About this RNA: An RNA of 177 nucleotides, treated with 2A3 and DMS and read out base by base. It was measured as part of the RMDB library OK2TRN. Reactivities are given for positions 27 through 126. The DMS profile rests on 2,004 reads. For 2A3, 1,636 sequencing reads were counted.

[RMDB]
RNA sequence: GGGAACGACUCGAGUAGAGUCGAAAACAGCAGGGCGUCGUCGCUGACGUCGACCGCGUUGGCCCGAACAUGCGCGAUGGGCCGCAACGGAUCCAGGCUCUUGACCGCUUCGAUCUCGAGCUGAUCGACACGUUCACACGUUCGCGUGUGAACGUGUAAAAGAAACAACAACAACAAC
Reactivity to 2A3 in 0.01 (KOAc 150mM, MgCl2 10mM, bicine 150mM(pH8.5), 24C), signal-to-noise 2, nucleotides 027 to 126: c020a010g110c010a090g050g010g010c010g020u020c010g020u080c050g020c300u300g020a000c030g020u000c000g030a020c000c030g060c090g030u070u040g030g000c010c010c000g010a070a050c050a090u180g020c040g030c000g110a080u050g020g000g000c000c000g000c040a110a070c070g050g020a020u020c040c010a060g010g000c000u000c000u110u070g070a040c050c000g050c110u040u040c030g040a050u000c010u020c030g030a060g060c050u030g050a010u030c000g010
Reactivity to DMS in 0.01 (KOAc 150mM, MgCl2 10mM, bicine 150mM(pH8.5), 24C), signal-to-noise 3, nucleotides 027 to 126: c030a100g040c030a060g010g000g000c010g030u010c000g020u000c100g010c280u010g010a000c000g020u000c000g010a050c020c050g030c140g030u000u010g010g010c000c000c000g040a100a080c190a090u000g040c050g000c070g010a180u010g000g000g020c000c060g000c140a060a100c130g010g010a050u000c040c120a180g000g000c010u000c020u010u000g000a150c300c030g020c060u010u000c080g010a020u000c010u010c070g010a070g010c080u010g000a070u000c020g000